[RMDB]
RNA sequence: GGGAACGACUCGAGUAGAGUCGAAAAGAUAUGGAUACAGACAUGCUCGAACAUCGGAAACGAUGUGAGAGCAACAGCUGUGAUCCUAAGUCAAACUGCUUAAUCGCGUUCGCGCGAUUAAGCAGAAGUCAGAUAGAAAGUUCGCUUUCUAUCUGACAAAAGAAACAACAACAACAAC
Reactivity to 2A3 in 0.01 (KOAc 150mM, MgCl2 10mM, bicine 150mM(pH8.5), 24C), signal-to-noise 3, nucleotides 027 to 126: g040a000u080a020u150g000g010a000u010a010c000a000g130a030c070a110u110g010c010u000c000g010a030a010c000a020u000c020g030g020a090a030a080c020g000a000u000g000u000g000a020g000a000g020c000a000a000c020a010g050c000u000g030u090g140a010u000c000c000u020a100a010g040u020c030a030a060a130c010u000g010c010u000u000a000a000u010c010g000c020g040u040u070c280g000c000g000c000g140a000u010u000a000a010g000c010a000g010a000a000
Reactivity to DMS in 0.01 (KOAc 150mM, MgCl2 10mM, bicine 150mM(pH8.5), 24C), signal-to-noise 5, nucleotides 027 to 126: g010a040u010a300u000g010g010a010u000a020c000a000g010a070c060a290u000g010c000u000c010g000a300a020c000a000u000c000g020g010a080a080a200c000g010a010u000g010u000g000a300g010a000g010c000a010a030c290a140g000c010u000g000u000g000a010u000c000c000u000a030a140g010u000c030a080a080a290c010u000g010c000u000u000a000a000u000c000g030c010g000u000u010c260g000c000g000c000g010a010u000u000a000a000g010c000a000g000a020a050
Record summary: Chemical mapping of a 177-nucleotide RNA with 2A3 and DMS. The DMS profile rests on 6,356 reads. Values are in units of 0.01, from 0 to 300, in steps of 10. DMS adducts were read by reverse transcription with MarathonRT. High DMS reactivity at an A or C suggests that its Watson-Crick edge is free. The reactions ran in a buffer of 150 mM KOAc, 10 mM MgCl2 and 150 mM bicine (pH 8.5), at 24 C. 2A3 is a SHAPE reagent: it acylates the 2'-hydroxyl of flexible nucleotides of all four kinds. Values cover nucleotides 27 to 126.